Description
Structure probing data (DMS and 2A3) for a 177-nucleotide construct. Conditions: 150 mM KOAc, 10 mM MgCl2 and 150 mM bicine (pH 8.5), 24 C. For 2A3 the reverse transcriptase was SuperScript II with manganese. The data come from the RNA Mapping Database (RMDB), library OK1LIB.

RNA sequence: GGGAACGACUCGAGUAGAGUCGAAAAGAAAAAGAGCACGAGAGACUAAUGUCUCGAGAUAUCGAAGGCCUAAGAUAUCGAGUAGUGGAUACGAAGGCCUAAGUAUCGACUACGAGUGCUCGAAAAAGGGAUAAUUUACCUUCGGGUAAAUUAUCCCAAAAGAAACAACAACAACAAC
Reactivity to DMS in 0.01 (KOAc 150mM, MgCl2 10mM, bicine 150mM(pH8.5), 24C), signal-to-noise 2, nucleotides 027 to 126: g010a050a080a070a070a190g000a010g050c000a040c000g000a190g010a010g010a000c000u020a120a120u020g030u010c000u000c000g000a160g010a000u000a000u020c000g000a170a080g000g000c000c000u010a070a090g000a080u000a000u000c020g000a270g030u040a020g020u030g000g000a000u000a010c000g010a210a050g000g010c030c050u030a000a060g000u000a000u000c000g000a060c040u020a060c080g020a140g010u000g010c000u000c000g000a030a080a070a110a080
Reactivity to 2A3 in 0.01 (KOAc 150mM, MgCl2 10mM, bicine 150mM(pH8.5), 24C), signal-to-noise 3, nucleotides 027 to 126: g130a000a040a000a020a000g000a000g000c000a000c000g060a060g000a000g000a050c030u260a290a110u300g000u000c000u000c000g010a050g000a000u000a000u040c000g010a050a030g040g090c000c000u010a040a010g020a020u000a010u000c000g020a000g000u070a020g040u170g100g000a000u000a000c030g100a200a000g120g010c000c020u000a030a000g000u000a000u010c000g230a000c030u010a020c020g000a000g040u000g000c000u000c010g000a000a010a000a000a000